[RMDB]
RNA sequence: GGGAACGACUCGAGUAGAGUCGAAAAGAUAUGGAGGGACGCAACAGCGUACGGUGUCGGAAACGACAUUACGACAUGCGUAACUCCUAAGUCAAAAGCAAACAUAAGCUUCGGCUUAUGUUUGCAAUCGCUUUAAACCGUUCGCGGUUUAAAGCGAAAAAGAAACAACAACAACAAC
Reactivity to DMS in 0.01 (KOAc 150mM, MgCl2 10mM, bicine 150mM(pH8.5), 24C), signal-to-noise 1, nucleotides 027 to 126: g000a000u000a200u000g000g010a000g000g000g040a020c000g010c000a030a130c240a130g000c030g010u000a040c300g010g040u020g000u040c000g000g010a050a080a150c000g030a020c010a010u000u000a020c000g010a060c100a100u000g000c000g000u000a000a000c000u000c000c000u000a020a050g000u000c020a050a040a200a080g000c000a010a000a000c000a000u000a000a010g000c010u000u000c300g030g020c000u010u000a010u000g000u000u000u000g000c030a020a010